[RMDB]
RNA sequence: GGGAACGACUCGAGUAGAGUCGAAAAUAAUUUCUGACUUGCCCUAUCCAAGCUUAGAGUUGGAUCAUGUGGCCCAAUUGAAGAAAUGGACUACUUGAUUCGUAAAGUGGGGCGGAAUGCGUGAGGCUGGUUUCACAGAGCAGUGAACAGCUCCCGCGAUCUUGGUGCACUUCGGUGCACCAAGAUCAAAAGAAACAACAACAACAAC
Reactivity to 2A3 in 0.01 (KOAc 150mM, MgCl2 10mM, bicine 150mM(pH8.5), 24C), signal-to-noise 1, nucleotides 027 to 156: u160a010a050u010u050u150c050u050g070a130c070u070u260g020c000c000c000u050a080u070c080c080a220a060g010c110u100u140a060g000a080g220u100u090g080g000a000u000c000a040u020g000u000g000g010c020c020c020a070a210u070u090g060a010a010g050a270a120a070u040g000g010a000c000u000a000c000u010u000g000a010u000u050c010g070u130a110a050a000g060u070g000g000g010g000c000g020g010a090a010u080g020c000g010u030g040a060g040g100c020u040g010g210u010u100u010c000a000c000a030g200a100g190c040a000g010u010g000a000a000c000a000g000c000u070c020c110c000g030c020